RNA sequence: GGGAACGACUCGAGUAGAGUCGAAAAAAGACUAGAGUUUUAGUCGUCGUUAAUUCCCAAGAUGUCUAUAAGAGUCUUACCAUAGUUGACAUUCCACAGAGUUUGACUUUUUCAUAUGAUGGGUUACCCGUUAUUCUGAGUUCGCUCAGAAUAACGGAAAAGAAACAACAACAACAAC
Reactivity to DMS in 0.01 (KOAc 150mM, MgCl2 10mM, bicine 150mM(pH8.5), 24C), signal-to-noise 1, nucleotides 027 to 126: a140a050g000a000c000u000a040g020a190g020u000u000u020u000a010g000u010c000g000u000c210g000u010u000a080a220u000u000c000c040c000a100a140g000a100u000g000u010c020u000a010u010a060a100g010a060g000u010c010u000u000a060c010c040a110u030a100g000u000u000g000a100c120a190u000u000c130c020a030c070a160g010a150g000u000u000u020g000a040c010u000u000u000u000u000c040a040u010a030u000g000a010u000g000g030g000u000u010a040c110